[RMDB]
This 207-nucleotide RNA was probed chemically with DMS and 2A3.
DMS (dimethyl sulfate) methylates the pairing face of unpaired adenines and cytosines.
Reactivities are given for positions 27 through 156.
RNA sequence: GGGAACGACUCGAGUAGAGUCGAAAAAUCAGGGGGCGCUAUCAUGCAAACUAGGAUUGUCUGCUCAUGCACAGAACCAACUACCGAUAACUAACAGUGCAUGAAGGUUAGUUAUUCCAUAUUAAUUAAAACUCGUAAUUCUUCGGAAUUACGAGAACUAAACAUCAGGGUUCGCCCUGAUGUUUAGAAAAGAAACAACAACAACAAC
Reactivity to DMS in 0.01 (KOAc 150mM, MgCl2 10mM, bicine 150mM(pH8.5), 24C), signal-to-noise 2, nucleotides 027 to 156: a130u000c080a080g000g020g030g070g050c090g040c090u000a070u020c050a110u000g010c010a050a150a110c040u010a140g020g000a080u000u010g020u000c030u000g030c020u000c010a060u070g040c000a060c050a120g030a050a120c070c060a060a070c110u000a200c090c020g010a070u000a020a040c030u010a020a060c030a170g040u010g030c030a030u010g010a080a120g020g010u000u000a020g020u000u000a040u000u000c010c020a080u000a120u010u000a100a140u020u010a050a060a070a160c000u000c000g010u010a010a020u000u000c000u000u000c300g030g000a030a000u000u000a010c000g000a010g000a010a110
Reactivity to 2A3 in 0.01 (KOAc 150mM, MgCl2 10mM, bicine 150mM(pH8.5), 24C), signal-to-noise 4, nucleotides 027 to 156: a000u050c030a040g050g000g000g030g020c030g000c010u060a090u170c020a050u180g020c010a030a030a080c050u090a060g080g080a040u080u050g040u060c030u050g020c020u010c010a010u050g020c000a010c000a020g050a080a060c030c030a050a090c050u150a120c010c080g040a010u010a030a010c010u000a010a000c000a050g030u020g050c000a010u020g010a010a020g060g000u020u010a000g010u000u010a020u100u050c020c000a070u120a070u260u210a150a070u100u140a050a080a060a080c000u000c000g000u000a000a000u010u000c000u000u060c170g060g000a000a000u000u000a000c000g000a000g000a000a000
DMS adducts were read by reverse transcription with MarathonRT.